[RMDB]
RNA sequence: GGGAACGACUCGAGUAGAGUCGAAAAAUGACACCACAUGUGAAAUGUUGUCUAUACCAGGGAAGCUCAUGAGAGACUCAGUGUCAAAGGUUUUUAACAAAAAAACUCUAGACUCCCCAAAAGAAUGCAGAUGGUCAGCAUAAACCAUGCUGUUUGCCUAACGGUGGAGUUUCGACUCCACCGUUAGAAAAGAAACAACAACAACAAC
Reactivity to 2A3 in 0.01 (KOAc 150mM, MgCl2 10mM, bicine 150mM(pH8.5), 24C), signal-to-noise 1, nucleotides 027 to 156: a000u150g000a010c010a060c080c030a000c110a050u140g060u040g220a180a030a050u010g000u100u010g010u000c010u010a060u040a060c000c070a010g020g000g000a010a020g040c000u000c010a020u220g050a080g010a010g020a300c050u040c190a040g050u010g040u070c020a110a200a000g000g000u090u000u000u000u070a130a090c140a020a210a050a000a090a000a000c020u060c000u140a050g000a040c000u000c000c000c000c000a000a150a000a080g050a110a010u200g010c000a000g030a080u010g010g090u000c050a060g020c000a200u150a080a020a090c010c010a010u060g110c000u000g060u130u090u170g020c000